[RMDB]
RNA sequence: GGGAACGACUCGAGUAGAGUCGAAAAGCUUAAUAACCUGCGCUGAGCCCUUCUCACCCAGCUUGCCUGUGUCCUAGGGAAUUGGAAGGUCAUCCUUCACAGGAUCGUGUGGAAGUCCUGCUCGGGGUCCAAACAUGGUAAUUCGUUACCAUGUUAAUAUUGUAACCUAGUUCGCUAGGUUACAAUAAAAAGAAACAACAACAACAAC
Reactivity to 2A3 in 0.01 (KOAc 150mM, MgCl2 10mM, bicine 150mM(pH8.5), 24C), signal-to-noise 5, nucleotides 027 to 156: g010c030u130u130a090a030u090a180a170c010c030u040g000c060g020c070u040g010a020g010c030c000c010u020u000c090u050c010a010c000c050c010a040g040c080u120u130g060c020c010u020g000u020g040u080c030c070u040a050g040g040g070a090a100u150u100g060g030a100a040g060g020u080c020a070u080c000c000u010u060c020a010c000a030g030g010a080u100c050g030u040g010u050g090g020a030a010g030u040c000c040u050g010c010u010c010g000g000g000g000u040c030c020a060a050a020c000a000u010g000g000u000a020a020u090u060c130g060u060u000a010c000c000a000u000g000u000u000a020a010
Reactivity to DMS in 0.01 (KOAc 150mM, MgCl2 10mM, bicine 150mM(pH8.5), 24C), signal-to-noise 3, nucleotides 027 to 156: g020c040u000u000a070a130u010a050a100c030c010u000g030c090g000c040u000g000a070g020c020c130c010u000u020c030u000c040a090c030c010c020a100g040c060u000u000g000c050c000u000g020u000g020u010c070c030u010a130g030g020g020a060a090u000u010g020g030a100a070g030g020u000c070a120u000c000c010u000u000c060a060c020a030g000g000a050u010c050g020u010g000u000g020g010a110a100g010u000c020c030u000g000c070u000c060g000g000g000g020u010c050c050a080a020a020c000a000u000g000g010u000a010a060u000u000c250g000u000u000a010c000c000a010u000g020u000u000a020a100

Source: RMDB library M2RFPK, as collected in RNAgym. An RNA of 207 nucleotides, treated with 2A3 and DMS and read out base by base. Values cover nucleotides 27 to 156. The DMS profile rests on 8,291 reads.